[RMDB]
RNA sequence: GGGAACGACUCGAGUAGAGUCGAAAAUAAUAUGAUGACGGUUGACCCUAAACUGCUGGCUCUUUUUUCCGACCCUCUUUUUCGAUGUGUUUUUCGGGCGUUAACUAAGAGGGAGACUAGUGACAUGGGGCAUCGUACUAUUCGUAGUACGAUGCCCAAAAGAAACAACAACAACAAC
Reactivity to 2A3 in 0.01 (KOAc 150mM, MgCl2 10mM, bicine 150mM(pH8.5), 24C), signal-to-noise 1, nucleotides 027 to 126: u080a000a000u300a110u300g050a040u040g000a140c100g040g040u150u100g160a210c040c000c030u000a070a140a000c000u040g160c000u000g000g050c000u000c040u020u150u000u000u170u000c000c000g050a050c000c000c000u000c020u020u040u030u020u040c000g070a000u000g180u000g000u160u300u300u210u060c070g000g120g000c000g000u000u000a080a000c000u000a160a000g000a000g000g110g000a180g030a000c000u000a110g050u000g150a000c090a140u150g000

Source: RMDB library OK1LIB, as collected in RNAgym. Chemical mapping of a 177-nucleotide RNA with 2A3. 2A3 adducts were read by reverse transcription with SuperScript II with manganese. Conditions: 150 mM KOAc, 10 mM MgCl2 and 150 mM bicine (pH 8.5), 24 C.